[RMDB]
This 177-nucleotide RNA was probed chemically with DMS and 2A3. For 2A3 the reverse transcriptase was SuperScript II with manganese. The RNA was probed in 150 mM KOAc, 10 mM MgCl2 and 150 mM bicine (pH 8.5) at 24 C. For 2A3, 2,100 sequencing reads were counted. DMS adducts were read by reverse transcription with MarathonRT.
RNA sequence: GGGAACGACUCGAGUAGAGUCGAAAAGAUAUGGAGCCACUACCCACCUUGUACUAAGGCGACGAAGUCAAUCUCUUCGGAAACGAAGAGAUUGACAGAGCCUUCUGCAAGAGGUGGCUCCUAAGUCCACCAUCAUGUUGUUCGCAACAUGAUGGUGAAAAGAAACAACAACAACAAC
Reactivity to DMS in 0.01 (KOAc 150mM, MgCl2 10mM, bicine 150mM(pH8.5), 24C), signal-to-noise 2, nucleotides 027 to 126: g010a210u000a190u040g000g000a050g010c000c000a010c030u000a190c070c080c070a300c210c010u000u000g010u000a000c220u000a030a010g030g000c000g020a120c300g050a110a100g000u010c000a000a000u000c000u000c000u000u010c010g020g000a080a090a240c000g010a010a000g000a000g020a000u000u000g000a020c000a000g000a260g000c010c000u000u000c300u000g030c000a020a000g010a170g010g010u000g000g010c000u010c000c000u000a000a090g000u010c150
Reactivity to 2A3 in 0.01 (KOAc 150mM, MgCl2 10mM, bicine 150mM(pH8.5), 24C), signal-to-noise 1, nucleotides 027 to 126: g170a020u300a130u300g010g040a000g040c030c000a040c040u250a300c010c010c020a020c030c000u030u050g030u050a100c120u110a160a000g030g000c000g110a140c120g230a300a010g000u010c000a020a010u030c020u010c000u020u000c060g030g020a130a090a030c000g000a000a000g040a000g000a000u010u010g000a000c000a000g000a000g000c000c000u010u000c030u050g040c000a010a030g020a020g000g010u010g000g000c000u000c000c020u010a010a020g000u040c040